Structure probing data (2A3) for a 207-nucleotide construct. The reactions ran in a buffer of 150 mM KOAc, 10 mM MgCl2 and 150 mM bicine (pH 8.5), at 24 C. For 2A3 the reverse transcriptase was SuperScript II with manganese.
RNA sequence: GGGAACGACUCGAGUAGAGUCGAAAAAAAACGGUGAAGAUGUAAAAGGUACUAACUGGGGCAAUGAAAAAGGCGCUGCUGUUCUUAAAUGGAUCGCAGACCAAGCUUCAAAUAAAGGUUUUGUUAGCUUAGAUGCUAACAACGUUAUGUCUAAAUACAGUAUAGUGCCGUUCGCGGCACUAUACUGAAAAGAAACAACAACAACAAC
Reactivity to 2A3 in 0.01 (KOAc 150mM, MgCl2 10mM, bicine 150mM(pH8.5), 24C), signal-to-noise 1, nucleotides 027 to 156: a050a000a000a000c020g000g000u020g000a060a000g010a000u070g000u110a020a010a050a190g040g000u020a060c070u140a180a000c000u030g000g000g000g010c000a000a040u020g090a030a030a000a030a000g210g000c250g010c080u000g040c000u000g000u010u010c010u120u080a250a170a150u120g030g000a000u010c040g010c010a000g010a010c010c000a040a040g000c000u080u040c040a000a080a050u220a000a100a050g020g040u020u030u030u030g000u010u010a000g000c000u060u050a020g010a230u300g070c000u000a000a000c000a000a000c040g030u120u000a090u180g060u000c030u060a000a020a280u300a040